[RMDB]
RNA sequence: GGGAACGACUCGAGUAGAGUCGAAAAGAUAUGGACCCAGGUGGAGGGCAACAGCGCUUAUUGGAUUAAGGCUCGGAAACGAGCCUUAAUCCAAUAAGCGACAUGCCUGACACCAGGGUCCUAAGUCCAUUGAUGAAAAGUUCGCUUUUCAUCAAUGAAAAGAAACAACAACAACAAC
Reactivity to DMS in 0.01 (KOAc 150mM, MgCl2 10mM, bicine 150mM(pH8.5), 24C), signal-to-noise 1, nucleotides 027 to 126: g010a130u010a300u000g000g010a000c000c010c000a040g010g040u000g000g000a300g020g000g020c010a040a050c230a200g000c030g000c000u000u000a000u000u000g000g000a030u010u010a010a030g030g000c000u020c030g020g000a070a120a190c000g030a040g020c020c000u000u000a020a000u000c000c000a000a000u000a000a040g010c000g030a000c040a130u000g010c000c020u000g000a300c000a000c000c000a030g020g000g000u000c010c010u000a010a070g010u000c050
Structure probing data (DMS) for a 177-nucleotide construct. The RNA was probed in 150 mM KOAc, 10 mM MgCl2 and 150 mM bicine (pH 8.5) at 24 C. Values cover nucleotides 27 to 126.